RNA sequence: GGGAACGACUCGAGUAGAGUCGAAAACCAGAUGCCCGCGCUAAACAGGAUGUUUCUCUCCUUAGUAAGUGCUAUAAGGCUAUGAAUGCAUAUCCUCUUGUAGUCACUCCUCUUGUUUCAGCAGGCAGGUCUUAUUGCUGUUCGCAGCAAUAAGACCAAAAGAAACAACAACAACAAC
Reactivity to 2A3 in 0.01 (KOAc 150mM, MgCl2 10mM, bicine 150mM(pH8.5), 24C), signal-to-noise 1, nucleotides 027 to 126: c000c000a040g020a070u060g000c050c000c000g100c060g010c040u010a000a000a040c010a020g010g040a030u080g150u030u290u030c130u010c010u030c010c020u020u030a020g030u050a130a030g010u040g000c010u020a010u010a050a010g020g010c000u010a040u010g140a210a110u270g030c010a010u030a040u050c010c040u110c040u030u000g050u000a020g070u100c010a010c050u040c000c000u000c030u000u000g000u000u020u020c010a020g030c000a000g000g050c020a000